[RMDB]
RNA sequence: GGGAACGACUCGAGUAGAGUCGAAAAACAGGAGCCGUGCACUACGGUGCACCGCUCCUGAACUAGUCUUGCACACAAUGGUAAGCCAGUAGUAAUGACAGUGCAAGUAGGUUAUUACUAUAUUAAAAACAGUUUUAUCACUUCGGUGAUAAAACAACAGACAUGACGAGUUCGCUCGUCAUGUCUGAAAAGAAACAACAACAACAAC
Reactivity to 2A3 in 0.01 (KOAc 150mM, MgCl2 10mM, bicine 150mM(pH8.5), 24C), signal-to-noise 1, nucleotides 027 to 156: a000c000a000g020g000a000g040c000c020g000u010g010c020a000c040u070a050c160g060g000u000g000c000a000c000c010g000c000u000c040c000u000g000a000a000c000u020a020g020u010c000u000u000g040c040a010c010a000c020a030a300u050g150g120u160a110a020g010c000c060a110g090u100a000g000u000a020a000u020g020a010c020a010g010u000g010c000a040a000g010u030a110g100g000u010u000a020u000u000a000c010u000a000u130a250u190u250a160a040a000a030a020c010a000g000u000u000u000u000a000u000c000a000c000u010u060c200g080g000u000g000a000u000a000a000a000a000c000a000a000
The record gives the reactivity of an RNA of 207 nucleotides to 2A3. The reactions ran in a buffer of 150 mM KOAc, 10 mM MgCl2 and 150 mM bicine (pH 8.5), at 24 C. Reactivities are given for positions 27 through 156. It was measured as part of the RMDB library M2RFPK.